[RMDB]
RNA sequence: GGGAACGACUCGAGUAGAGUCGAAAACUCCUCGCUGGCGCCGGCUGGGCAACAUUCCGAGGGGACCGUCCCUCGGUAAUGGCGAAUGGGACCCAGAACUCUCUCUAGAUUCCCAGAGUGAAUCGAGUAAGGCCACCGUUCGCGGUGGCCAAAAGAAACAACAACAACAAC
Reactivity to DMS in 0.01 (KOAc 150mM, MgCl2 10mM, bicine 150mM(pH8.5), 24C), signal-to-noise 1, nucleotides 027 to 129: c000u010c000c060u020c050g010c070u010g040g000c110g060c000c150g000g050c130u030g020g000g070c020a150a170c090a050u010u020c000c000g030a030g030g030g000g000a190c290c190g000u050c000c000c000u000c000g020g000u000a000a000u050g040g040c080g020a120a000u000g000g110g010a140c000c050c030a190g000a120a150c120u010c000u000c000u000c040u000a030g060a140u050u050c030c000c030a170g040a110g040u070g020a000a030u000c000g000a080g080u050a090a140
Reactivity to 2A3 in 0.01 (KOAc 150mM, MgCl2 10mM, bicine 150mM(pH8.5), 24C), signal-to-noise 2, nucleotides 027 to 129: c010u050c000c000u050c020g090c070u050g020g050c030g040c000c000g000g140c010u040g020g090g000c000a010a010c000a000u020u010c000c000g020a000g000g000g000g080a090c150c080g260u260c000c030c000u020c000g010g010u080a020a000u020g040g000c000g030a070a100u020g060g000g150a180c000c000c000a000g000a010a000c000u080c010u000c000u000c020u090a040g000a120u000u080c000c000c010a000g000a020g000u090g010a000a060u080c060g000a000g000u030a040a000
The record gives the reactivity of an RNA of 170 nucleotides to DMS and 2A3.
It was measured as part of the RMDB library 15KLIB.
For DMS the reverse transcriptase was MarathonRT.
Reactivities are given for positions 27 through 129.